[RMDB]
RNA sequence: GGGAACGACUCGAGUAGAGUCGAAAAGCUCUGCGAGACAGAUCGAACAACAAAGAGAGAUCGAAAAUCUUAGAGGAGAGAACGAAUCUGUCGUCUUCACUAGGACAUUGUCGAUCAGAGGUCCAAAGACCUUUCAUGGGUUCGCCUAUGGAAGGUCAAAAGAAACAACAACAACAAC
Reactivity to DMS in 0.01 (KOAc 150mM, MgCl2 10mM, bicine 150mM(pH8.5), 24C), signal-to-noise 9, nucleotides 027 to 126: g020c010u000c010u010g010c030g000a300g010a020c030a080g000a020u000c000g000a300a230c060a060a100c290a080a120a090g000a070g000a300g000a020u010c010g000a100a080a110a180u000c000u000u010a010g000a070g000g000a020g010a110g010a080a070c020g010a080a130u030c160u040g000u000c030g000u000c000u000u000c010a090c010u000a010g000g000a010c110a080u010u010g000u000c010g000a190u000c000a020g010a040g010g000u010c010c020a060a110a090
Reactivity to 2A3 in 0.01 (KOAc 150mM, MgCl2 10mM, bicine 150mM(pH8.5), 24C), signal-to-noise 9, nucleotides 027 to 126: g030c000u000c000u000g010c020g010a030g000a020c010a010g010a020u010c010g050a060a050c030a060a020c040a030a300a010g110a020g010a000g000a010u010c010g040a050a030a020a050u000c000u000u010a010g010a030g040g010a010g000a000g030a060a020c020g030a050a120u140c110u180g130u050c030g070u000c000u000u000c000a010c010u010a000g000g010a000c010a100u070u120g020u010c000g000a010u020c000a000g010a000g020g020u000c000c000a010a020a020
The record gives the reactivity of an RNA of 177 nucleotides to DMS and 2A3.
For DMS, 46,291 sequencing reads were counted.
The 2A3 profile rests on 82,977 reads.
Values cover nucleotides 27 to 126.
For DMS the reverse transcriptase was MarathonRT.